[RMDB]
RNA sequence: GGGAACGACUCGAGUAGAGUCGAAAACAACUGCCGAAACAAUCUUUUUCGUUACUAUUAUAAUUAAAAUGGUCGAUGGCGGUUUGUCUCUGGAAAUCAGAGAGAAAGACUUGAAUAGGUAUAGGGACACAUAAUCAGUGUUCGCACUGAUUAUGUGAAAAGAAACAACAACAACAAC
Reactivity to DMS in 0.01 (KOAc 150mM, MgCl2 10mM, bicine 150mM(pH8.5), 24C), signal-to-noise 2, nucleotides 027 to 126: c040a090a060c070u000g020c010c000g010a200a190a110c020a070a050u000c000u010u000u000u000u000c010g000u000u000a020c040u000a060u000u030a160u020a060a080u000u020a040a060a030a020u000g010g000u000c100g030a090u000g020g010c010g010g010u000u000u010g000u000c000u010c000u000g000g000a100a080a160u000c000a000g000a030g010a040g020a020a060a060g010a020c190u020u000g010a040a080u000a150g000g030u000a020u000a060g010g000g010a300
Reactivity to 2A3 in 0.01 (KOAc 150mM, MgCl2 10mM, bicine 150mM(pH8.5), 24C), signal-to-noise 2, nucleotides 027 to 126: c020a010a010c010u030g000c000c000g070a030a050a070c020a040a070u020c040u040u110u010u040u060c020g020u050u030a020c000u020a040u240u030a150u070a240a180u230u190a120a110a080a090u040g030g010u020c090g040a040u080g020g000c000g000g000u030u040u120g010u000c000u000c000u010g020g050a060a220a160u290c000a010g000a000g000a000g010a040a070a000g010a020c000u050u030g020a080a010u080a100g090g040u050a080u180a120g040g010g030a000
Record summary:
Chemical mapping of a 177-nucleotide RNA with DMS and 2A3. For 2A3 the reverse transcriptase was SuperScript II with manganese. The data come from the RNA Mapping Database (RMDB), library RFMREP.